Structure probing data (2A3 and DMS) for a 177-nucleotide construct. The RNA was probed in 150 mM KOAc, 10 mM MgCl2 and 150 mM bicine (pH 8.5) at 24 C.

RNA sequence: GGGAACGACUCGAGUAGAGUCGAAAAUAUGCUCUACCCUUGGUGGAACUGUUGCAGAAACAGCAGCCACGGAUACAGCGAAAGGAUGGCGUGCUGGCCCUGGUGAUUGUACCCACCAGGGAGCUGAUGACGUCAUAUCGUUCGCGAUAUGACGUCAAAAAGAAACAACAACAACAAC
Reactivity to 2A3 in 0.01 (KOAc 150mM, MgCl2 10mM, bicine 150mM(pH8.5), 24C), signal-to-noise 1, nucleotides 027 to 126: u090a070u080g010c010u000c020u060a060c000c000c000u000u140g050g010u000g000g040a060a080c080u030g030u000u040g000c040a060g300a110a020a000c020a000g000c030a030g000c000c010a020c000g000g020a070u170a100c030a040g110c030g110a100a040a040g100g020a070u080g030g000c180g070u040g030c030u030g060g060c000c000c000u030g010g000u020g010a040u210u090g050u220a070c030c010c000a000c010c010a000g000g000g000a000g000c000u110g020a130
Reactivity to DMS in 0.01 (KOAc 150mM, MgCl2 10mM, bicine 150mM(pH8.5), 24C), signal-to-noise 3, nucleotides 027 to 126: u000a080u030g000c050u000c090u000a070c030c000c020u000u000g020g000u000g030g010a120a070c020u000g000u000u000g020c300a110g000a110a040a050c050a010g010c040a300g000c010c000a010c080g020g010a060u010a050c200a070g000c030g010a060a080a070g000g000a060u010g010g020c040g040u000g010c030u000g020g000c010c000c000u000g010g020u000g000a090u010u010g000u010a110c200c100c010a000c020c000a020g000g010g010a030g010c050u010g000a220